[RMDB]
This 207-nucleotide RNA was probed chemically with DMS and 2A3. The reactions ran in a buffer of 150 mM KOAc, 10 mM MgCl2 and 150 mM bicine (pH 8.5), at 24 C.

RNA sequence: GGGAACGACUCGAGUAGAGUCGAAAACUUAACACAUUGCUGCCCUUAACUUUGACUUACUUGCUUUUAAAGAUGAUGAAGCUGGCCAGGCGCCGUGACUCAUACCUAUAAUCCCAGCAUUUUGGGAGGCCCAGGCAGGUGGAUCACGAGGUCAGCACAUUAGCUCCAGUUUCGACUGGAGCUAAUGAAAAGAAACAACAACAACAAC
Reactivity to DMS in 0.01 (KOAc 150mM, MgCl2 10mM, bicine 150mM(pH8.5), 24C), signal-to-noise 1, nucleotides 027 to 156: c070u000u000a040a060c070a090c040a160u000u000g030c000u000g030c060c000c010u000u000a110a170c080u010u010u000g060a110c020u010u000a090c060u000u020g020c010u010u000u000u010a050a140a220g020a030u010g000a090u000g010a100a130g000c020u010g010g060c050c090a160g000g040c080g000c070c000g000u000g000a130c070u000c050a070u000a070c010c050u000a200u000a170a290u000c010c010c010a030g060c190a140u010u000u000u010g010g050g000a040g070g010c020c160c070a110g000g080c020a030g050g040u010g010g000a050u000c010a030c030g050a050g010g010u010c010a050g020c060a040
Reactivity to 2A3 in 0.01 (KOAc 150mM, MgCl2 10mM, bicine 150mM(pH8.5), 24C), signal-to-noise 3, nucleotides 027 to 156: c020u070u110a120a000c030a000c040a180u110u130g010c050u060g000c040c020c000u040u070a120a070c090u150u120u170g040a030c030u030u100a020c000u050u060g030c000u140u100u040u230a070a200a080g080a040u170g010a020u050g050a050a010g010c020u060g020g000c010c030a160g110g010c100g020c080c020g030u020g040a030c000u020c030a030u070a150c000c030u110a050u080a260a040u010c000c000c000a040g060c150a210u160u210u250u070g000g000g000a000g020g000c040c050c040a040g010g040c030a010g100g000u030g020g000a090u030c010a010c050g000a000g000g010u000c000a000g000c000a000
For 2A3 the reverse transcriptase was SuperScript II with manganese. For DMS, 1,727 sequencing reads were counted.